[RMDB]
RNA sequence: GGGAACGACUCGAGUAGAGUCGAAAAGAAUUAAGAUCCAGGAAGCCGAAAGGCGCGAAGCGACCGCUUGUACGUGUCGACCUAGACGAAAAGUCUAGGGGAGAUUCUGCACAUCUCCGACACGGUAGGGAGCUUCGCCCUGGUUUAGGUGCAGACAAGUAUAGUACGUGUUCGCACGUACUAUACUAAAAGAAACAACAACAACAAC
Reactivity to 2A3 in 0.01 (KOAc 150mM, MgCl2 10mM, bicine 150mM(pH8.5), 24C), signal-to-noise 2, nucleotides 027 to 156: g020a010a000u160u130a100a060g030a050u040c010c000a000g010g010a150a020g000c000c020g060a100a050a040g000g000c000g000c000g010a000a010g010c000g010a060c010c000g070c170u140u200g070u110a040c000g000u000g000u000c000g060a070c000c000u000a000g000a000c020g080a230a120a100a090g000u000c000u000a000g010g010g010g000a000g000a000u090u030c010u020g000c000a010c000a000u000c000u000c000c010g010a000c010a000c020g020g040u100a120g040g010g000a010g000c000u010u000c000g000c000c010c000u000g000g000u000u020u070a010g000g000u000g000c000a000g000a020c020a070
Reactivity to DMS in 0.01 (KOAc 150mM, MgCl2 10mM, bicine 150mM(pH8.5), 24C), signal-to-noise 1, nucleotides 027 to 156: g010a180a070u000u000a090a120g000a090u020c000c000a090g000g040a170a160g000c010c030g010a100a060a160g010g040c050g040c010g030a010a030g050c000g020a260c010c000g030c220u000u010g020u010a070c000g020u010g000u000c000g010a160c030c000u020a020g010a020c000g020a160a180a100a220g010u010c000u000a000g010g000g000g000a040g000a050u010u000c010u010g040c020a050c090a250u000c000u030c010c030g000a010c020a010c010g010g000u010a170g010g010g000a300g000c040u000u000c000g000c010c010c000u000g000g010u000u000u000a050g010g000u000g000c000a010g030a140c030a110